[RMDB]
The record gives the reactivity of an RNA of 177 nucleotides to DMS and 2A3.
RNA sequence: GGGAACGACUCGAGUAGAGUCGAAAAGAACAUCAGUUCGCUGAUGUUCAAAGGCCGAGUAGUGUUGGGUCGCGAAAGGCCAUACAUAAACAUUCACUCACAAAACAACGUCCUUCGGGACGUUGAACGCAAAUGUUCAGUUCGCUGAACAUUUGCGAAAAGAAACAACAACAACAAC
Reactivity to DMS in 0.01 (KOAc 150mM, MgCl2 10mM, bicine 150mM(pH8.5), 24C), signal-to-noise 1, nucleotides 027 to 126: g030a030a000c020a050u030c000a080g020u020u020c240g030c000u000g020a000u000g020u000u000c030a020a080a160g000g000c010c000g010a130g000u000a080g000u030g020u000u030g020g010g000u010c040g000c000g010a150a160a140g020g000c000c000a060u000a020c080a070u010a020a010a110c170a080u010u000c080a010c040u010c020a070c210a080a120a080a190c040a010a010c000g000u020c000c000u000u000c110g010g020g050a000c000g000u000u000g000a060a030
Reactivity to 2A3 in 0.01 (KOAc 150mM, MgCl2 10mM, bicine 150mM(pH8.5), 24C), signal-to-noise 1, nucleotides 027 to 126: g000a000a000c000a020u000c000a000g090u030u090c130g100c110u000g000a020u020g010u010u000c010a000a000a050g030g050c020c000g000a010g020u040a000g000u000g190u210u180g110g130g140u150c030g000c030g100a010a010a000g010g000c000c000a000u040a000c000a040u080a000a080a010c030a090u140u180c080a030c050u140c040a070c030a020a150a010a070c010a010a010c000g000u060c010c000u050u040c080g040g000g110a000c010g000u010u000g000a000a000
The RNA was probed in 150 mM KOAc, 10 mM MgCl2 and 150 mM bicine (pH 8.5) at 24 C. 2A3 is a SHAPE reagent: it acylates the 2'-hydroxyl of flexible nucleotides of all four kinds. It was measured as part of the RMDB library M2PK50. For DMS, 621 sequencing reads were counted.